RNA sequence: GGGAACGACUCGAGUAGAGUCGAAAAGGAAACUUGUUCGCAAGUUUCCAAAGAACGCUGCAUCGCAAAGCGAGGCCGCCAGAGCGGCCAUACGCGAAGAAAAAACAAAUGGGUUCGCCCAUUUGAAGUCCUAUCUAAUCUUCGGAUUAGAUAGGACAAAAGAAACAACAACAACAAC
Reactivity to DMS in 0.01 (KOAc 150mM, MgCl2 10mM, bicine 150mM(pH8.5), 24C), signal-to-noise 2, nucleotides 027 to 126: g010g010a010a010a000c000u000u000g020u000u000c160g030c000a030a020g000u000u000u010c010c010a040a070a080g000a120a260c040g000c040u000g010c070a100u000c000g010c020a040a110a050g020c000g030a130g010g000c020c010g000c000c210a230g010a120g010c020g010g010c000c000a030u000a030c150g000c010g000a030a150g030a000a020a080a110a030a160c010a010a020a020u000g000g000g000u000u000c270g000c000c000c000a000u000u000u000g010a070a130
Reactivity to 2A3 in 0.01 (KOAc 150mM, MgCl2 10mM, bicine 150mM(pH8.5), 24C), signal-to-noise 2, nucleotides 027 to 126: g000g000a000a000a000c000u010u020g020u070u050c090g010c110a000a000g010u000u000u000c000c000a010a020a010g020a160a020c040g010c060u070g000c040a090u060c030g020c050a120a040a060g020c020g020a070g010g000c010c010g040c070c070a120g070a050g240c010g000g040c010c020a000u060a020c020g010c030g000a080a040g050a040a140a000a020a020a000c000a000a010a000u000g000g050g020u040u040c190g120c010c000c000a000u010u000u010g030a050a020